[RMDB]
RNA sequence: GGGAACGACUCGAGUAGAGUCGAAAACUACAUAGUUUCGACUAUGUAGAAACCAUUAGGAAGCAUGCAGAUCCAUAUGGACGAGGGCAACUAACCUAUUGCGAACAGCAGGUUUCGACCUGCUGAACAAUGUCUUAAGCUUCGGCUUAAGACAUUGAAAAGAAACAACAACAACAAC
Reactivity to DMS in 0.01 (KOAc 150mM, MgCl2 10mM, bicine 150mM(pH8.5), 24C), signal-to-noise 7, nucleotides 027 to 126: c010u000a000c000a000u000a000g000u000u000u020c160g020a040c010u000a000u000g010u000a000g000a080a080a160c030c010a060u010u000a090g010g000a130a050g010c080a040u010g010c020a060g000a160u000c030c020a170u010a080u010g020g010a030c050g000a160g010g000g010c030a030a090c050u000a070a070c030c020u000a050u000u000g020c100g010a080a210c010a010g010c000a000g010g010u000u000u000c170g000a020c010c000u000g010c000u000g000a050a120
Reactivity to 2A3 in 0.01 (KOAc 150mM, MgCl2 10mM, bicine 150mM(pH8.5), 24C), signal-to-noise 7, nucleotides 027 to 126: c000u000a000c000a000u010a010g010u030u070u070c180g050a020c010u010a000u010g000u000a000g010a030a010a000c010c000a030u020u070a030g040g030a070a010g040c120a060u100g000c030a020g050a150u000c020c020a100u100a140u300g030g000a020c060g030a090g040g140g000c010a030a030c020u050a020a050c010c010u040a080u060u180g090c090g050a100a030c010a010g000c000a000g010g030u030u030u100c130g040a020c000c010u000g000c000u000g000a000a000
An RNA of 177 nucleotides, treated with DMS and 2A3 and read out base by base.
Source: RMDB library M2PK50, as collected in RNAgym.
Conditions: 150 mM KOAc, 10 mM MgCl2 and 150 mM bicine (pH 8.5), 24 C.
High 2A3 reactivity points to a flexible backbone, as in loops and unpaired stretches.
For DMS the reverse transcriptase was MarathonRT.